Chemical mapping of a 177-nucleotide RNA with DMS and 2A3. Conditions: 150 mM KOAc, 10 mM MgCl2 and 150 mM bicine (pH 8.5), 24 C. For DMS the reverse transcriptase was MarathonRT. Values cover nucleotides 27 to 126.

[RMDB]
RNA sequence: GGGAACGACUCGAGUAGAGUCGAAAACAGCAGUGGCGUUUAGCAUACCUCCCGGCAUGGUAUAGCCUAUGUGUGCAUCCGCCAAAAUGGGAAAAGUCCCCUUUUAGCUGUACCAUAUGCACGUGUAACGUGCACUGCUCUUCGGAGCAGUGCACGUAAAAGAAACAACAACAACAAC
Reactivity to DMS in 0.01 (KOAc 150mM, MgCl2 10mM, bicine 150mM(pH8.5), 24C), signal-to-noise 2, nucleotides 027 to 126: c030a050g000c060a170g060u000g010g010c000g020u000u000u000a090g000c030a000u000a020c090c150u000c090c110c140g000g020c020a120u000g010g050u080a070u030a100g000c000c040u020a050u020g000u000g000u000g000c020a040u000c120c060g000c070c050a000a030a020a010u010g010g000g020a040a070a160a160g000u000c010c000c010c050u000u000u000u020a150g050c000u000g010u000a160c030c020a050u060a080u020g020c080a070c070g010u000g070u030a070
Reactivity to 2A3 in 0.01 (KOAc 150mM, MgCl2 10mM, bicine 150mM(pH8.5), 24C), signal-to-noise 5, nucleotides 027 to 126: c010a000g030c000a040g010u040g080g000c010g010u030u020u060a050g000c010a000u020a030c000c030u150c060c060c030g000g020c040a050u110g160g000u300a130u120a160g010c000c000u070a060u120g010u000g000u000g000c000a000u020c010c000g000c000c020a020a010a010a020u120g000g030g000a040a140a100a070g220u150c000c000c000c010u040u060u020u110a020g000c010u000g000u040a050c000c000a050u130a070u240g130c050a020c150g040u180g010u150a100